Annotation
Structure probing data (DMS and 2A3) for a 207-nucleotide construct. High 2A3 reactivity points to a flexible backbone, as in loops and unpaired stretches. For DMS the reverse transcriptase was MarathonRT. For 2A3, 1,219 sequencing reads were counted. Values cover nucleotides 27 to 156. The RNA was probed in 150 mM KOAc, 10 mM MgCl2 and 150 mM bicine (pH 8.5) at 24 C.

RNA sequence: GGGAACGACUCGAGUAGAGUCGAAAAACUUAAAAGACCCAUUUGUCAUAAAUGUCAUACCCCUAUUUUAUCUUGGCUUCUUGGCAAUAUUUGGUGGAACUGUUACUCGUAUAAUGGUUUUGUACUUUGUUAGCCAGUAUGUUAACAUGCUUGGUGCACACAUAAACUAGUUCGCUAGUUUAUGUGUAAAAGAAACAACAACAACAAC
Reactivity to DMS in 0.01 (KOAc 150mM, MgCl2 10mM, bicine 150mM(pH8.5), 24C), signal-to-noise 3, nucleotides 027 to 156: a070c070u000u000a060a090a100a150g000a120c020c030c020a220u010u000u010g030u000c040a090u000a050a070a080u000g030u000c020a110u000a130c040c020c030c030u000a140u000u010u000u010a080u010c060u000u010g010g020c020u000u000c040u010u010g010g030c000a060a050u000a050u000u000u000g030g020u000g010g010a040a040c050u010g000u000u000a030c040u000c180g020u010a060u000a020a060u000g010g010u000u000u000u000g020u000a100c120u010u000u000g010u000u010a150g000c010c010a100g040u000a050u000g020u000u000a090a080c040a040u010g010c050u020u000g040g020u000g040c090
Reactivity to 2A3 in 0.01 (KOAc 150mM, MgCl2 10mM, bicine 150mM(pH8.5), 24C), signal-to-noise 3, nucleotides 027 to 156: a000c070u100u070a030a140a020a040g100a080c030c000c010a060u030u040u050g050u040c020a040u050a190a120a060u150g040u050c060a070u150a200c020c020c000c070u180a250u060u170u080u090a120u050c080u030u050g010g000c000u060u000c020u030u040g010g000c020a000a010u040a100u120u110u060g070g000u040g000g030a050a030c020u010g010u070u070a040c030u050c100g050u080a030u040a130a040u050g030g020u000u000u060u050g040u010a040c040u030u070u080g010u050u000a000g020c000c000a010g010u000a000u040g070u100u110a100a060c020a040u030g010c000u070u100g000g000u010g050c010